An RNA of 177 nucleotides, treated with 2A3 and DMS and read out base by base. For 2A3 the reverse transcriptase was SuperScript II with manganese. DMS adducts were read by reverse transcription with MarathonRT. Reactivities are given for positions 27 through 126.
RNA sequence: GGGAACGACUCGAGUAGAGUCGAAAAAGCCUGGAGUACGCUCCAGGCAUGCUGCAACAUCCCCGCGGAUGGGCUGGCGCGAAGCGAUCUUCCGCUUCGCUUCCAGAUGUGAAUCCGCUGCAGCUAAGUCGACUACCAAUUUCGAUUGGUAGUCGACAAAAGAAACAACAACAACAAC
Reactivity to 2A3 in 0.01 (KOAc 150mM, MgCl2 10mM, bicine 150mM(pH8.5), 24C), signal-to-noise 3, nucleotides 027 to 126: a000g010c010c000u000g000g010a000g000u050a050c220g040c110u000c010c000a000g000g000c000a000u060g010c000u000g000c000a030a030c000a190u070c000c000c000c020g000c000g000g000a020u040g000g200g000c010u000g000g010c020g010c000g000a000a000g000c000g050a110u080c150u240u090c160c000g000c000u010u000c000g000c000u020u090c000c000a000g010a060u140g070u050g150a080a010u000c010c000g030c000u000g000c010a010g000c000u020a160a010
Reactivity to DMS in 0.01 (KOAc 150mM, MgCl2 10mM, bicine 150mM(pH8.5), 24C), signal-to-noise 3, nucleotides 027 to 126: a120g030c000c000u000g000g050a020g050u000a010c230g070c010u010c000c000a030g000g000c000a010u000g020c040u000g020c000a070a090c260a300u000c000c000c000c300g000c000g030g000a020u000g010g020g020c000u000g000g000c300g000c000g000a000a000g010c000g000a060u000c100u140u010c160c000g020c030u000u000c000g000c000u030u070c010c000a000g000a070u060g020u040g000a060a080u000c030c000g000c000u000g000c000a030g000c000u000a050a130